[RMDB]
RNA sequence: GGGAACGACUCGAGUAGAGUCGAAAAGAUAUGGAUAGGUGAAUCAGAUGAAGAUCUUUUGACGUUCGACGAUUCGGAAACGAAUCCAAGAACGAUAAGAUCCAUCUGAUUCACCUAUCCUAAGUCAGGGUACAAUAUGGUUCGCCAUAUUGUACCCAAAAGAAACAACAACAACAAC
Reactivity to DMS in 0.01 (KOAc 150mM, MgCl2 10mM, bicine 150mM(pH8.5), 24C), signal-to-noise 1, nucleotides 027 to 126: g000a060u000a300u000g010g000a000u000a010g010g010u030g000a010a020u000c000a000g000a030u020g010a210a220g000a000u000c000u000u000u000u020g050a200c150g000u000u000c000g020a300c300g000a000u000u020c020g020g000a060a050a300c000g010a000a000u000c010c110a070a300g000a000a000c000g000a140u000a000a020g020a000u000c000c000a020u020c000u000g000a000u000u060c000a020c010c000u000a010u000c010c000u000a030a030g000u000c010a210